[RMDB]
RNA sequence: GGGAACGACUCGAGUAGAGUCGAAAAAACAUCUCAGCAGAUGGAUGGACCAGGCAAGGAGCCAGUGGUGAAGAAACUGCUUGGAUUCUCAAUGGAGCAAGAGAGAAUGGGAAAUUACAAUCAUAGAACUUCAUCGUGGAUUCGUCCACGAUGAAGUAAAAGAAACAACAACAACAAC
Reactivity to DMS in 0.01 (KOAc 150mM, MgCl2 10mM, bicine 150mM(pH8.5), 24C), signal-to-noise 2, nucleotides 027 to 126: a080a020c030a060u000c010u010c110a080g000c100a040g000a090u000g010g010a090u000g010g000a110c020c020a060g000g010c090a080a080g000g000a200g040c000c070a050g050u030g000g000u000g000a090a130g000a070a100a050c050u000g000c060u010u000g050g000a070u000u010c000u000c050a150a070u020g020g000a070g000c040a060a060g010a120g000a050g000a080a050u010g000g000g020a070a050a070u020u020a060c210a060a070u010c060a050u010a090g020a070
Reactivity to 2A3 in 0.01 (KOAc 150mM, MgCl2 10mM, bicine 150mM(pH8.5), 24C), signal-to-noise 2, nucleotides 027 to 126: a010a020c040a020u010c010u010c010a040g000c000a000g040a180u040g030g000a010u020g070g040a070c040c030a030g000g010c000a100a120g150g000a060g110c000c020a030g100u060g030g000u090g000a060a030g090a070a080a020c030u020g010c010u090u080g000g000a100u050u010c000u010c000a000a200u180g070g020a080g000c010a080a010g040a020g010a020g060a130a030u050g020g060g000a030a070a030u190u110a050c070a070a050u090c060a040u060a110g100a040
Chemical mapping of a 177-nucleotide RNA with DMS and 2A3. The reactions ran in a buffer of 150 mM KOAc, 10 mM MgCl2 and 150 mM bicine (pH 8.5), at 24 C. The DMS profile rests on 1,203 reads. For 2A3, 1,158 sequencing reads were counted.